[RMDB]
RNA sequence: GGGAACGACUCGAGUAGAGUCGAAAAUGUGCCUGCAAAAAUGCAUUCAUGCGAGCGCGGGCCGCUUCGCGCACGGCCUUAUCUGGGGAAUGUACUGGCAGGGCAACCUUGGACCAGAGAACAAGGUCGAUACUAAUGAUUUCGAUCAUUAGUAUCGAAAAGAAACAACAACAACAAC
Reactivity to DMS in 0.01 (KOAc 150mM, MgCl2 10mM, bicine 150mM(pH8.5), 24C), signal-to-noise 6, nucleotides 027 to 126: u010g020u010g020c000c010u000g010c020a020a060a060a150a150u010g000c020a020u010u010c050a090u030g010c030g010a030g000c150g010c090g010g010g000c030c020g000c050u010u010c070g020c040g000c060a280c030g010g000c010c020u000u020a130u020c060u020g000g020g000g000a030a040u000g010u010a030c140u010g000g010c010a050g020g000g000c040a040a070c000c010u000u000g000g000a140c030c040a090g000a100g000a050a100c050a020a010g000g010u000
Reactivity to 2A3 in 0.01 (KOAc 150mM, MgCl2 10mM, bicine 150mM(pH8.5), 24C), signal-to-noise 9, nucleotides 027 to 126: u130g020u070g220c000c010u010g000c030a040a090a090a060a060u090g000c000a010u000u040c020a030u220g160c050g100a050g020c100g000c050g040g010g000c000c010g010c040u070u090c050g020c010g000c020a030c030g030g020c000c000u200u230a150u100c060u110g050g000g030g020a010a020u010g010u020a040c080u040g090g000c000a010g000g020g000c010a020a030c000c000u010u020g030g030a080c040c050a090g020a010g010a150a020c020a030a010g020g010u010

This 177-nucleotide RNA was probed chemically with DMS and 2A3. In probing experiments dimethyl sulfate is read out at A N1 and C N3, which are open when not base-paired. 2A3 adducts were read by reverse transcription with SuperScript II with manganese. Source: RMDB library OK1LIB, as collected in RNAgym. The reactions ran in a buffer of 150 mM KOAc, 10 mM MgCl2 and 150 mM bicine (pH 8.5), at 24 C. For DMS the reverse transcriptase was MarathonRT.